Structure probing data (2A3) for a 207-nucleotide construct. The reactions ran in a buffer of 150 mM KOAc, 10 mM MgCl2 and 150 mM bicine (pH 8.5), at 24 C. Reactivities are given for positions 27 through 156. Reactivities are rounded to 0.1 and cut off at 0 and 3. The data come from the RNA Mapping Database (RMDB), library OK3TST. High 2A3 reactivity points to a flexible backbone, as in loops and unpaired stretches.
[RMDB]
RNA sequence: GGGAACGACUCGAGUAGAGUCGAAAAGAAAGAGUGGCGGAGCACGUGCCUGGACAGGUUCAUGCUACUUCGCGUAAGCAGAAGGUUGUUAAGGCAACUCAUUUUGACAAGCUGUUUGGACCAAACCGCCGUGACAUUCCUCUUCUUGAGGAUGUCAGCUUCGGACAUUUUUCGAAAUGUCCGAAGCAAAAGAAACAACAACAACAAC
Reactivity to 2A3 in 0.01 (KOAc 150mM, MgCl2 10mM, bicine 150mM(pH8.5), 24C), signal-to-noise 1, nucleotides 027 to 156: g100a030a120a000g060a070g080u070g020g010c020g010g070a000g070c070a050c200g070u130g000c000c010u030g060g080a060c040a040g020g020u070u030c010a020u120g000c000u010a030c000u030u110c110g030c010g030u010a140a000g030c020a010g000a130a010g050g030u010u010g000u050u020a110a060g070g000c010a000a000c000u070c070a160u020u050u000u230g070a100c020a040a040g040c070u030g080u090u000u160g010g070a070c050c000a040a010a020c020c030g000c020c090g000u050g010a000c000a040u300u300c010c000u040c060u250u090c190u180u250g000a000g000g000a010u000g000u030c000a010